[RMDB]
RNA sequence: GGGAACGACUCGAGUAGAGUCGAAAAGAUAUGGACUACCUUCGAUAAGCUGCCAUCGGAAACGAUGGACAGCUUUUGACGAAGAUGUCCUAAGUCAAACUGUAUGUUAGUUCGCUAACAUACAGAACCCCAGUAUUCAGUUCGCUGAAUACUGGGGAAAAGAAACAACAACAACAAC
Reactivity to 2A3 in 0.01 (KOAc 150mM, MgCl2 10mM, bicine 150mM(pH8.5), 24C), signal-to-noise 1, nucleotides 027 to 126: g000a020u040a010u040g020g000a000c020u040a050c010c000u000u000c030g180a220u070a300a080g000c030u000g010c010c000a020u000c000g000g000a100a010a000c000g000a000u020g000g010a020c010a020g010c000u020u000u000u030g030a000c030g000a000a000g020a020u020g000u030c000c000u000a060a010g050u010c030a160a080a120c020u010g020u020a010u010g010u020u000a020g020u030u010c150g000c160u010a010a000c000a000u000a000c000a020g000a000a000
Reactivity to DMS in 0.01 (KOAc 150mM, MgCl2 10mM, bicine 150mM(pH8.5), 24C), signal-to-noise 2, nucleotides 027 to 126: g000a010u000a190u020g000g000a030c000u000a100c150c010u000u000c010g010a140u010a030a040g010c000u000g000c000c000a000u000c000g030g010a070a040a060c010g010a020u000g000g000a050c010a010g000c000u000u000u000u000g020a170c050g000a010a000g020a010u000g000u000c000c000u020a030a090g000u000c000a110a110a230c000u000g000u000a000u000g000u000u000a000g010u000u010c250g030c010u010a000a010c000a000u000a000c000a010g010a080a100

Record summary
The record gives the reactivity of an RNA of 177 nucleotides to 2A3 and DMS. Reactivities are given for positions 27 through 126. The reactions ran in a buffer of 150 mM KOAc, 10 mM MgCl2 and 150 mM bicine (pH 8.5), at 24 C. The 2A3 profile rests on 2,397 reads.